[RMDB]
RNA sequence: GGGAACGACUCGAGUAGAGUCGAAAAUGACGCUGGCAGCAUCGCGGACUGGGAGAAGAGAGGCGAAGAAAAGAAGGGGAGUCCCCGAUCGAAUGUCCAUAGGCAGAGAAACCUCUGGAGUCCUCUAAAAGAAUAUACUUCGGUAUAUUCAAAAGAAACAACAACAACAAC
Reactivity to 2A3 in 0.01 (KOAc 150mM, MgCl2 10mM, bicine 150mM(pH8.5), 24C), signal-to-noise 2, nucleotides 027 to 129: u070g030a020c080g020c080u020g030g000c000a020g010c040a070u030c020g030c050g040g000a010c020u090g050g010g020a090g020a090a000g050a020g000a000g000g000c020g000a020a010g050a040a100a000a000g120a010a040g020g010g000g030a010g050u010c000c000c000c010g000a030u090c020g060a080a050u120g050u030c040c000a040u050a050g020g000c030a000g000a000g060a180a050a010c030c000u000c000u000g000g020a000g020u000c010c000u010c010u030a030a050a030a070
Reactivity to DMS in 0.01 (KOAc 150mM, MgCl2 10mM, bicine 150mM(pH8.5), 24C), signal-to-noise 4, nucleotides 027 to 129: u040g020a030c130g030c100u030g000g030c110a000g020c100a080u010c060g040c090g040g000a110c110u090g020g010g050a150g030a050a040g030a080g050a010g030g010c080g000a100a040g000a120a080a080a030g020a100a110g000g000g000g000a060g050u100c070c020c030c070g010a090u080c000g040a060a060u020g020u010c050c000a090u000a090g020g040c050a120g010a000g060a090a120a080c060c030u000c090u010g050g000a200g000u070c050c030u060c040u050a030a080a120a060
Source information:
This 170-nucleotide RNA was probed chemically with 2A3 and DMS. Source: RMDB library 15KLIB, as collected in RNAgym. Values are in units of 0.01, from 0 to 300, in steps of 10. For DMS, 7,222 sequencing reads were counted. DMS adducts were read by reverse transcription with MarathonRT. The RNA was probed in 150 mM KOAc, 10 mM MgCl2 and 150 mM bicine (pH 8.5) at 24 C.